[RMDB]
RNA sequence: GGGAACGACUCGAGUAGAGUCGAAAAGAUAUGGAUCGCUACAGAGCUUGGAUUUAUCGGAAACGAUUGUCAGCUCGUAGGCGAUCCUAAGUCAAGCGUUGUUCUCUGGUUCGCCAGAGAACAACAAUCUACAAACUGUCUUCGGACAGUUUGUAGAAAAAGAAACAACAACAACAAC
Reactivity to DMS in 0.01 (KOAc 150mM, MgCl2 10mM, bicine 150mM(pH8.5), 24C), signal-to-noise 3, nucleotides 027 to 126: g010a060u010a300u010g000g010a000u000c000g020c000u000a040c070a220g040a000g010c010u000u000g010g000a030u000u030u000a000u000c000g020g000a070a100a160c010g010a030u000u000g010u000c000a040g010c000u010c010g020u000a100g030g030c000g020a000u000c000c000u010a000a060g010u000c030a110a180g010c190g000u000u000g000u000u000c000u000c000u000g000g010u000u000c300g020c000c000a020g000a020g000a010a000c000a000a000c000a110a090
Reactivity to 2A3 in 0.01 (KOAc 150mM, MgCl2 10mM, bicine 150mM(pH8.5), 24C), signal-to-noise 2, nucleotides 027 to 126: g020a020u060a030u100g010g010a000u000c000g000c020u040a000c170a240g010a010g000c040u180u300g160g000a070u300u300u110a010u080c000g010g020a100a030a030c020g000a020u010u020g020u030c000a000g000c000u000c000g000u020a040g070g000c010g000a000u010c000c000u000a040a000g040u000c050a020a060g190c050g090u010u000g000u000u020c000u000c000u000g020g110u070u180c260g070c050c010a000g000a000g000a000a010c000a000a010c000a000a010
Structure probing data (DMS and 2A3) for a 177-nucleotide construct. Values cover nucleotides 27 to 126. The 2A3 profile rests on 3,216 reads. The RNA was probed in 150 mM KOAc, 10 mM MgCl2 and 150 mM bicine (pH 8.5) at 24 C. 2A3 adducts were read by reverse transcription with SuperScript II with manganese. DMS adducts were read by reverse transcription with MarathonRT.